RNA sequence: GGGAACGACUCGAGUAGAGUCGAAAAAAGGGGCUAAGGCCAACGUGAUGCACAGCAGAGUCGAAGCCGCAUGCCCUGACCUUUCGGAGGUGGCUAUGGACAGAUUCACACUGGACAUGAAACGCGACGUAGUCCUGGGAUUCGUCCCAGGACUACGAAAAGAAACAACAACAACAAC
Reactivity to 2A3 in 0.01 (KOAc 150mM, MgCl2 10mM, bicine 150mM(pH8.5), 24C), signal-to-noise 2, nucleotides 027 to 126: a000a000g050g010g010g000c010u020a050a010g020g000c000c040a060a030c000g010u050g050a070u040g000c040a060c160a300g000c010a010g020a060g080u290c010g060a050a010g010c000c000g020c040a010u110g000c000c020c000u020g110a060c010c030u080u130u100c120g080g020a100g050g050u050g020g000c020u040a030u040g020g020a000c000a050g040a130u170u070c080a050c000a010c030u000g030g000a010c010a020u040g020a060a070a000c110g020c070g060a030
Reactivity to DMS in 0.01 (KOAc 150mM, MgCl2 10mM, bicine 150mM(pH8.5), 24C), signal-to-noise 3, nucleotides 027 to 126: a050a080g030g020g020g030c030u020a250a210g030g000c010c030a040a080c200g000u030g000a210u000g020c050a120c180a210g000c070a030g000a220g050u000c000g010a300a180g000c010c000g000c070a090u000g000c000c000c020u000g000a040c050c030u000u030u020c060g000g000a070g000g010u010g000g010c080u010a020u000g000g000a040c040a050g020a120u000u000c120a050c230a140c040u000g000g050a070c000a020u000g000a070a110a040c090g010c060g000a130
Chemical mapping of a 177-nucleotide RNA with 2A3 and DMS. The reactions ran in a buffer of 150 mM KOAc, 10 mM MgCl2 and 150 mM bicine (pH 8.5), at 24 C. The data come from the RNA Mapping Database (RMDB), library OK2TRN.